RNA sequence: GGGAACGACUCGAGUAGAGUCGAAAAGCGAAAAUCGGACGGUGGCUGCAAGUCGCAUCGCAAAACCGCGGCAAGUGGAGUUAGCGAGAGGAGGCUGGGUUUUGGCUUUCUUAAGCAAUCGGUCACCAUAAGAGGAUUCGCUUCGGCGAAUCCUCAACACUGAUGACAUCUUCGGAUGUCAUCAGUGAAAAGAAACAACAACAACAAC
Reactivity to 2A3 in 0.01 (KOAc 150mM, MgCl2 10mM, bicine 150mM(pH8.5), 24C), signal-to-noise 2, nucleotides 027 to 156: g020c000g060a020a010a000a170u210c080g040g060a020c050g000g010u000g010g000c000u050g070c090a070a000g040u020c040g010c020a040u020c050g000c040a050a010a070a000c040c020g000c030g100g000c240a170a090g020u020g050g060a110g070u210u130a020g000c020g000a040g000a030g070g010a000g000g040c040u050g070g240g100u060u180u210u170g010g000c000u020u020u000c010u020u100a080a030g020c000a000a060u050c010g000g040u020c010a000c020c000a000u050a040a030g010a000g000g000a000u000u000c000g000c000u000u010c050g050g020c000g000a000a000u000c040c010u000c000a000a000